RNA sequence: GGGAACGACUCGAGUAGAGUCGAAAACGCGCUAGAGAUGUACAUGGGUUUGCCCCCUUAUGUGUGUACUAUCUCGUUUCAUACGCCUGUGAUAGGUUCAAAGGGGGCGGUCUGAGGUUGGCGCGAAGUGUAUUAAUAAAUUCGUUUAUUAAUACACAAAAGAAACAACAACAACAAC
Reactivity to 2A3 in 0.01 (KOAc 150mM, MgCl2 10mM, bicine 150mM(pH8.5), 24C), signal-to-noise 9, nucleotides 027 to 126: c010g010c000g000c010u060a030g010a030g010a180u110g080u130a050c020a070u090g040g010g030u040u040u300g010c000c000c000c000c000u030u040a260u130g110u020g030u020g030u070a030c000u030a050u030c060u020c030g020u010u090u050c080a080u100a100c050g030c020c060u070g010u030g090a070u110a080g060g030u120u150c030a030a000a000g000g000g000g000g000c010g000g010u000c010u010g030a040g020g050u030u020g010g000c010g000c010g020a060a010
Reactivity to DMS in 0.01 (KOAc 150mM, MgCl2 10mM, bicine 150mM(pH8.5), 24C), signal-to-noise 9, nucleotides 027 to 126: c020g010c010g010c010u010a060g010a080g010a050u020g010u020a070c090a040u010g000g000g000u000u010u040g020c010c010c000c000c000u000u020a060u020g030u020g010u000g010u010a040c010u020a030u020c060u000c070g010u000u010u020c090a080u010a060c100g000c270c050u010g010u010g010a080u030a020g000g010u010u020c190a050a030a020g010g010g000g010g020c000g000g000u000c040u010g000a070g010g010u010u010g000g000c020g010c010g000a040a110